[RMDB]
RNA sequence: GGGAACGACUCGAGUAGAGUCGAAAAAUCACCAUCUACCCUGAUUAUCUUUCGGGUAUUUUGUGAUGCUUGGAAGAUAACAAAUCUUCCGAGUGUGCGAUAAAAUGACGAACAAUAUAAACCUCUCACUCAACCAGAACUUCGGUUCUGGUUGAGUAAAAGAAACAACAACAACAAC
Reactivity to 2A3 in 0.01 (KOAc 150mM, MgCl2 10mM, bicine 150mM(pH8.5), 24C), signal-to-noise 4, nucleotides 027 to 126: a000u000c000a000c010c010a010u020c010u010a020c000c010c080u130g050a070u050u140a150u220c140u080u120u030c010g030g000g000u000a000u010u000u000u020g040u000g000a000u010g000c000u000u000g000g000a010a000g000a000u060a190a040c130a060a230a050u000c010u010u000c010c010g000a010g000u050g070u070g020c070g030a020u080a070a150a050a060u220g110a120c060g010a210a000c060a170a000u110a000u060a130a090a050c030c000u030c000u010c000
Chemical mapping of a 177-nucleotide RNA with 2A3. The RNA was probed in 150 mM KOAc, 10 mM MgCl2 and 150 mM bicine (pH 8.5) at 24 C.